[RMDB]
RNA sequence: GGGAACGACUCGAGUAGAGUCGAAAAAGACAGGAAGCAUGAGGGCAGGCUCAUCAGUGUCAGAGCAGGGGAGACCAGCACAGACACCUUACAAGCAGAAUGACCUUCUGUGGCUACAGAGAAAGGCUUCAGGCAAAGAGAUGCAGCUCUGGGCCCACCAUCAUUUAUCGUUCGCGAUAAAUGAUGGAAAAGAAACAACAACAACAAC
Reactivity to 2A3 in 0.01 (KOAc 150mM, MgCl2 10mM, bicine 150mM(pH8.5), 24C), signal-to-noise 4, nucleotides 027 to 156: a000g060a020c060a030g030g070a040a000g010c060a080u110g010a070g010g040g000c040a020g050g010c020u040c040a150u030c050a070g020u030g040u100c070a030g010a010g100c060a030g020g040g010g010a080g020a060c010c020a010g020c040a010c010a050g050a020c010a040c050c010u090u120a040c040a050a020g000c020a020g050a110a050u150g040a150c010c000u020u060c020u040g050u090g030g000c010u130a150c020a010g020a010g050a050a110a010g050g000c010u050u050c030a030g110g000c060a070a080a010g080a010g020a060u100g000c020a030g080c000u000c010u030g010g030g000c010c020c000a010
Reactivity to DMS in 0.01 (KOAc 150mM, MgCl2 10mM, bicine 150mM(pH8.5), 24C), signal-to-noise 1, nucleotides 027 to 156: a150g020a050c010a150g030g000a120a090g010c050a060u000g010a100g030g000g040c090a040g000g000c040u010c040a110u000c080a070g010u000g020u000c020a040g020a070g030c040a110g000g010g030g000a080g020a100c040c100a140g030c000a050c040a150g000a090c040a040c040c040u000u000a070c070a070a190g070c030a070g000a040a080u000g000a100c080c040u000u000c030u000g010u000g000g040c050u000a070c080a070g000a070g040a060a050a050g050g020c000u000u010c040a030g020g040c100a040a070a120g060a160g000a050u000g040c000a060g000c050u000c040u000g000g000g040c000c000c030a160